[RMDB]
RNA sequence: GGGAACGACUCGAGUAGAGUCGAAAACCAUGGAAGUCGGCAUCCGCUAAGGAGUGUGUAACAACUCACCUGCCAAAUGGACUAGCCCUGAAAAUGGAUGACGCUAGCAGUGGAUAGUCGAUGCCCAGUGUGGUGGGACAUUCGUGUCCCACCACACAAAAGAAACAACAACAACAAC
Reactivity to 2A3 in 0.01 (KOAc 150mM, MgCl2 10mM, bicine 150mM(pH8.5), 24C), signal-to-noise 2, nucleotides 027 to 126: c000c000a020u030g010g030a090a060g010u010c000g010g000c000a010u020c000c000g000c010u030a100a080g010g010a090g010u050g000u000g030u130a090a110c020a060a030c000u000c060a030c020c020u090g000c000c000a070a040a120u150g010g020a050c000u000a000g000c000c020c010u000g020a050a040a030a030u190g030g040a040u080g150a080c160g010c040u020a000g000c000a000g000u000g000g000a030u030a150g000u000c000g020a010u040g000c020c000c010a020
An RNA of 177 nucleotides, treated with 2A3 and read out base by base.
Reactivities are rounded to 0.1 and cut off at 0 and 3.
The reactions ran in a buffer of 150 mM KOAc, 10 mM MgCl2 and 150 mM bicine (pH 8.5), at 24 C.
Source: RMDB libraries RFM100 and RFMREP, as collected in RNAgym.